The data come from the RNA Mapping Database (RMDB), library OK2TST. The record gives the reactivity of an RNA of 177 nucleotides to DMS and 2A3. The DMS profile rests on 845 reads. For 2A3 the reverse transcriptase was SuperScript II with manganese. Values cover nucleotides 27 to 126.
[RMDB]
RNA sequence: GGGAACGACUCGAGUAGAGUCGAAAAUCGCCUCAUCUAAUAUAAUGACAGAGGGGUUAAGUGCUAAUACACUUGCUAUAGCCACACGCUGCUUCUGUCCCCCCGAUAAUGCAUUAGGUUCAUAAUCGUGAUUCCUACAUUUCGAUGUAGGAAUCACAAAAGAAACAACAACAACAAC
Reactivity to DMS in 0.01 (KOAc 150mM, MgCl2 10mM, bicine 150mM(pH8.5), 24C), signal-to-noise 1, nucleotides 027 to 126: u010c120g010c030c000u020c110a030u000c030u000a060a040u000a100u060a060a030u010g010a030c030a030g020a030g040g000g010g000u000u010a020a110g000u000g030c020u000a080a120u010a220c030a130c080u000u000g000c090u000a090u000a010g030c010c040a060c220a110c110g020c000u010g000c000u000u000c000u000g000u000c000c000c000c000c000c000g020a030u000a070a010u010g010c070a080u010u000a070g020g000u010u000c070a030u000a060a050u000c150
Reactivity to 2A3 in 0.01 (KOAc 150mM, MgCl2 10mM, bicine 150mM(pH8.5), 24C), signal-to-noise 2, nucleotides 027 to 126: u010c010g080c000c010u000c010a020u000c020u020a120a060u140a150u040a180a150u200g000a000c000a010g010a000g000g040g040g010u040u070a290a070g030u080g040c000u060a160a070u110a140c090a030c110u050u130g050c040u060a010u060a080g050c020c020a040c010a010c230g020c020u220g060c000u090u000c000u000g040u000c020c040c000c010c000c000g020a170u230a160a020u040g040c030a000u000u160a040g040g010u000u030c040a100u120a270a050u090c080